[RMDB]
RNA sequence: GGGAACGACUCGAGUAGAGUCGAAAAGAUAUGGACGAAGAACAGGACCCUUCGCGUGUCGGAAACGACACUGAAUGAAGCCUGGGAGUCCUAAGUCACGCGAUCGAAUACUUCGGUAUUCGAUCAAGCCUAACUCGCUGUUCGCAGCGAGUUAGGCAAAAGAAACAACAACAACAAC
Reactivity to 2A3 in 0.01 (KOAc 150mM, MgCl2 10mM, bicine 150mM(pH8.5), 24C), signal-to-noise 1, nucleotides 027 to 126: g040a020u050a020u120g010g000a000c010g150a300a130g020a100a020c010a020g050g000a110c080c010c000u020u040c040g070c040g070u000g000u010c000g000g060a060a020a010c050g000a010c000a010c000u030g030a040a090u180g000a110a010g000c000c020u050g000g000g030a050g000u050c030c010u040a180a050g040u000c040a030c160g150c140g010a000u000c010g000a000a000u010a010c000u000u070c130g120g000u000a000u000u030c000g000a000u000c000a000a010
Reactivity to DMS in 0.01 (KOAc 150mM, MgCl2 10mM, bicine 150mM(pH8.5), 24C), signal-to-noise 1, nucleotides 027 to 126: g010a050u000a300u010g010g090a000c000g010a100a160g030a190a210c010a020g000g000a140c090c230c050u000u010c010g010c170g000u000g010u020c000g010g010a080a070a140c010g010a020c010a000c000u010g020a040a020u010g010a080a040g000c000c000u000g000g000g000a110g010u010c000c010u000a010a180g000u010c070a080c160g000c240g000a010u000c000g000a000a000u000a000c000u000u030c100g010g020u000a000u000u010c000g010a010u000c000a050a070